Structure probing data (DMS and 2A3) for a 207-nucleotide construct.
The DMS profile rests on 1,390 reads.
DMS adducts were read by reverse transcription with MarathonRT.
2A3 adducts were read by reverse transcription with SuperScript II with manganese.
It was measured as part of the RMDB library OK3TST.
The RNA was probed in 150 mM KOAc, 10 mM MgCl2 and 150 mM bicine (pH 8.5) at 24 C.

RNA sequence: GGGAACGACUCGAGUAGAGUCGAAAAGUGAGUGAACGAGUUCGAUCUCACGUUCGAUCACACACACACGAGAGUACACUCGUGUGUACUCACACGUUCGUGAUCACUCGUUCUCACACGUACACUCACUCACGAGUGUGAACACGAUCACGAGUACCCGUCAUCCGUAAUUCGUUACGGAUGACGGAAAAGAAACAACAACAACAAC
Reactivity to DMS in 0.01 (KOAc 150mM, MgCl2 10mM, bicine 150mM(pH8.5), 24C), signal-to-noise 1, nucleotides 027 to 156: g000u000g000a050g090u010g010a050a120c030g040a090g010u000u040c120g020a120u000c060u000c020a000c070g070u000u000c000g000a190u020c060a020c120a260c080a060c120a080c000a000c110g000a090g000a250g000u000a150c300a090c000u000c090g070u000g090u010g010u030a010c070u000c060a050c100a150c050g000u000u000c030g080u000g020a030u000c000a100c100u000c050g020u010u010c020u000c020a080c040a050c060g000u010a040c020a050c040u000c040a080c190u000c070a080c100g010a010g040u000g000u000g020a020a030c030a070c000g000a120u000c070a090c020g040a030g000u000a100c110
Reactivity to 2A3 in 0.01 (KOAc 150mM, MgCl2 10mM, bicine 150mM(pH8.5), 24C), signal-to-noise 5, nucleotides 027 to 156: g010u010g020a040g000u080g050a020a010c000g000a010g020u200u210c110g100a120u010c050u030c120a030c030g000u020u020c030g030a150u100c030a030c010a010c000a000c000a000c000a000c090g000a010g000a010g220u270a030c130a020c090u000c010g010u020g000u000g000u020a010c040u070c000a070c010a010c090g020u010u010c010g000u000g010a020u030c010a010c010u010c000g000u000u000c000u000c000a020c010a000c030g030u090a020c020a010c000u040c000a040c030u110c030a070c150g010a020g000u030g010u040g050a040a020c080a010c110g100a090u130c100a030c140g080a030g060u100a060c020